[RMDB]
RNA sequence: GGGAACGACUCGAGUAGAGUCGAAAAAGCCCUGCUUCUUCCUCAUGGAGGCCGCCUAUCCCGCCGACGAGGCGGAUGGUGACCUGAGCGAUUGGGCGCUGAAGAUGGAGGCAGACCGUAAGCGGAUCAAGAACUCCGACAUUCAGGUCUGCGCCGCAGUAGUAUCGAACUUCGGUUCGAUACUACUAAAAGAAACAACAACAACAAC
Reactivity to 2A3 in 0.01 (KOAc 150mM, MgCl2 10mM, bicine 150mM(pH8.5), 24C), signal-to-noise 2, nucleotides 027 to 156: a000g050c040c000c010u000g020c030u110u070c000u060u010c010c050u060c030a070u200g140g010a070g010g020c030c000g010c010c000u040a070u110c040c030c000g000c020c000g060a200c070g030a060g020g000c000g010g000a000u020g000g000u030g000a010c000c000u030g020a030g010c030g160a180u030u100g020g020g000c100g000c030u080g030a080a060g030a150u200g010g010a000g030g080c000a000g000a000c000c000g050u030a080a030g000c000g000g000a020u110c130a170a050g110a120a090c070u000c000c000g110a160c020a080u100u090c040a030g000g000u000c000u040g020c000g000c010c000g000c000
Reactivity to DMS in 0.01 (KOAc 150mM, MgCl2 10mM, bicine 150mM(pH8.5), 24C), signal-to-noise 1, nucleotides 027 to 156: a130g010c000c020c010u000g040c030u010u000c050u010u010c040c020u000c060a120u000g000g050a040g050g060c020c030g050c000c010u000a210u010c180c010c000g060c000c000g020a200c080g050a300g020g000c050g000g030a000u000g000g030u000g060a010c010c010u000g010a080g060c000g000a090u000u020g000g000g060c000g040c030u000g010a080a080g010a100u010g000g000a180g030g000c010a050g000a050c000c020g010u000a100a160g000c050g010g030a010u010c070a120a140g030a110a090c170u000c020c010g000a160c050a280u010u000c120a120g000g000u000c010u010g000c000g030c050c010g020c140